Description
Chemical mapping of a 207-nucleotide RNA with 2A3 and DMS. For 2A3 the reverse transcriptase was SuperScript II with manganese.
RNA sequence: GGGAACGACUCGAGUAGAGUCGAAAAGGAGAAUAUAAAAGUAAGCUUGAAGAAUUAGUAAAAGAACUAUGUUUAGAGGAUAACGUAUCUUUUCUGGGCAAGUUAGAGCAUAAAGAAGUUAUUAAUGUUAUGAAACAGUAUGAUAUAUUUUCUCUUACUGGAUAUUACGUUUCGACGUAAUAUCCAGAAAAGAAACAACAACAACAAC
Reactivity to 2A3 in 0.01 (KOAc 150mM, MgCl2 10mM, bicine 150mM(pH8.5), 24C), signal-to-noise 2, nucleotides 027 to 156: g030g020a000g020a060a010u060a000u060a120a090a020a050g060u060a040a030g010c020u050u060g080a040a060g040a150a130u240u110a030g030u110a040a070a030a030g030a030a010c040u090a040u180g040u020u060u040a050g000a030g040g020a010u050a130a070c080g000u060a030u020c000u040u090u040u000c010u030g000g020g050c030a030a010g000u010u050a010g000a000g010c010a010u060a040a120a000g030a040a010g040u010u030a030u020u040a120a030u060g020u040u120a070u160g040a100a070a020c020a000g060u100a080u080g040a000u050a020u030a010u160u050u050u020c010u010c010u040u050a110
Reactivity to DMS in 0.01 (KOAc 150mM, MgCl2 10mM, bicine 150mM(pH8.5), 24C), signal-to-noise 1, nucleotides 027 to 156: g000g010a150g010a100a060u000a050u000a080a080a110a220g010u000a040a150g010c030u000u000g020a060a090g000a110a050u000u010a080g010u000a020a060a040a070g010a080a050c070u000a040u010g030u000u000u020a090g040a100g060g000a050u010a010a020c040g040u030a040u000c060u010u000u010u010c050u000g040g000g040c010a010a070g000u000u000a050g010a030g040c030a070u000a040a020a060g000a030a040g010u000u000a050u010u000a040a050u000g000u000u000a080u010g000a140a040a070c030a070g000u000a060u010g010a140u000a150u010a060u000u000u010u000c020u000c010u000u010a180

DMS adducts were read by reverse transcription with MarathonRT.